The record gives the reactivity of an RNA of 207 nucleotides to 2A3 and DMS. High DMS reactivity at an A or C suggests that its Watson-Crick edge is free. For DMS the reverse transcriptase was MarathonRT. Conditions: 150 mM KOAc, 10 mM MgCl2 and 150 mM bicine (pH 8.5), 24 C. For 2A3 the reverse transcriptase was SuperScript II with manganese.
[RMDB]
RNA sequence: GGGAACGACUCGAGUAGAGUCGAAAACGGUUACGCCUUCUCUACCGUUAUCAAGGAAGGUACUCGGCCAUGCUAAGGGAAGCAUUAUUCCUUAGGCGCAUGUCGCCGCCAGCAUGGUGUGAGGGGAAAAAGUAUGCUGGGUUCGCCCAGCAUACAACUCAUCUAUUUACUUCGGUAAAUAGAUGAGAAAAGAAACAACAACAACAAC
Reactivity to 2A3 in 0.01 (KOAc 150mM, MgCl2 10mM, bicine 150mM(pH8.5), 24C), signal-to-noise 9, nucleotides 027 to 156: c010g000g010u030u040a020c030g010c000c000u020u010c040u010c020u060a040c010c000g210u140u100a060u120c080a030a000g020g010a000a010g010g000u060a060c010u000c010g030g000c000c000a000u000g000c000u060a070a070g010g000g000a020a010g010c120a220u130u140a140u240u030c000c000u040u070a070g010g000c000g000c030a130u250g100u300c040g010c030c000g000c020c030a000g000c000a010u010g000g030u050g150u150g020a030g010g030g030g050a030a080a000a020a040g010u000a000u000g000c000u000g000g010g040u030u040c160g090c030c000c000a000g000c000a000u000a000c000a000a000
Reactivity to DMS in 0.01 (KOAc 150mM, MgCl2 10mM, bicine 150mM(pH8.5), 24C), signal-to-noise 4, nucleotides 027 to 156: c010g010g010u000u000a120c040g000c010c000u000u000c010u000c000u010a070c030c020g020u000u000a040u000c300a070a100g020g020a050a010g010g030u000a060c020u000c030g010g020c010c000a020u000g010c000u000a160a150g010g020g020a040a040g020c200a150u010u010a160u000u000c010c000u000u010a110g020g020c010g010c050a120u000g010u000c040g050c010c010g020c090c050a060g020c020a030u000g020g020u000g000u000g000a070g010g000g000g000a030a080a070a100a160g000u000a000u010g000c000u010g010g020g030u000u010c300g020c030c010c000a010g000c000a010u000a000c000a060a070